This 177-nucleotide RNA was probed chemically with DMS and 2A3.

RNA sequence: GGGAACGACUCGAGUAGAGUCGAAAAAAAAUUUCCUGCCCAUACAUACUCCACUUUUUUAACAUGGAUCUUGAGGGUGAGGCCUACUUUAGUUUAGAUUUUGUGUGAAGUAUUUGUAUCAGUGAGACCGAUAAGGCUAAUUCGUUAGCCUUAUCGGAAAAGAAACAACAACAACAAC
Reactivity to DMS in 0.01 (KOAc 150mM, MgCl2 10mM, bicine 150mM(pH8.5), 24C), signal-to-noise 2, nucleotides 027 to 126: a030a050a080a090u010u000u000c010c000u000g000c050c010c040a100u000a060c040a060u000a040c020u010c020c020a040c030u000u000u010u000u000u000a060a120c070a060u000g010g020a020u000c050u010u000g010a080g010g010g020u000g000a070g000g000c060c020u010a040c080u010u000u000a060g020u000u000u010a040g010a070u000u000u000u010g030u000g020u020g000a050a040g000u000a030u000u000u000g020u000a040u010c100a050g010u010g020a140g020a170
Reactivity to 2A3 in 0.01 (KOAc 150mM, MgCl2 10mM, bicine 150mM(pH8.5), 24C), signal-to-noise 1, nucleotides 027 to 126: a000a000a020a030u000u010u000c000c000u000g010c020c040c000a010u040a040c010a020u050a010c000u010c010c000a020c070u030u100u020u050u020u140a030a020c020a100u110g070g000a110u000c000u020u070g000a090g090g050g000u060g020a030g060g080c010c000u010a060c060u210u210u100a030g030u100u090u060a040g010a070u040u080u090u170g100u040g010u020g000a080a010g000u010a060u100u150u080g000u010a020u060c020a010g040u020g150a020g030a040